[RMDB]
Source information
An RNA of 207 nucleotides, treated with 2A3 and DMS and read out base by base. The DMS profile rests on 2,339 reads.

RNA sequence: GGGAACGACUCGAGUAGAGUCGAAAACUCUUGUUAGGUGAAAGUUGAUGGUCGCCGUCUCAGUCCAUGCCUUUGAAAACAGUUCUAUGUAGUAGGGAGUCGAGAACCUAUGAGAGUUAGAACUUGCUAUGCCUUGGACUCUUCGGAGUCCAAGGAAGAAUCGUUGUCUGUUCGCAGACAACGAUUCAAAAGAAACAACAACAACAAC
Reactivity to 2A3 in 0.01 (KOAc 150mM, MgCl2 10mM, bicine 150mM(pH8.5), 24C), signal-to-noise 1, nucleotides 027 to 156: c040u050c000u030u030g050u160u160a040g000g040u050g130a170a040a050g070u060u050g060a050u090g040g000u040c040g010c020c040g040u050c010u000c030a040g040u010c010c000a010u060g080c000c040u060u100u160g130a140a100a030a030c040a010g000u010u000c050u050a090u060g040u050a040g000u000a000g020g030g050a050g070u080c030g020a010g000a110a000c040c000u020a030u080g130a150g000a000g110u000u040a010g000a010a030c000u030u020g010c040u130a080u180g000c000c000u000u000g000g000a000c040u000c000u050u050c150g080g000a000g000u000c000c000a000a000g000g000a000a000
Reactivity to DMS in 0.01 (KOAc 150mM, MgCl2 10mM, bicine 150mM(pH8.5), 24C), signal-to-noise 1, nucleotides 027 to 156: c030u000c040u000u000g010u000u010a090g010g040u000g010a060a080a110g040u010u010g000a110u000g020g030u010c030g040c010c020g040u000c030u020c020a140g000u010c010c010a100u010g000c010c030u000u000u020g000a080a090a080a070c090a080g010u000u000c030u000a030u000g040u020a240g020u000a030g020g010g010a210g030u010c110g000a250g020a110a100c010c020u000a030u000g000a230g000a150g040u000u000a030g010a000a050c010u010u010g030c040u020a090u000g010c030c000u000u000g030g020a000c000u000c010u030u020c260g040g000a000g030u000c000c010a030a000g010g000a020a000
The 2A3 profile rests on 655 reads. Source: RMDB library M2RFPK, as collected in RNAgym.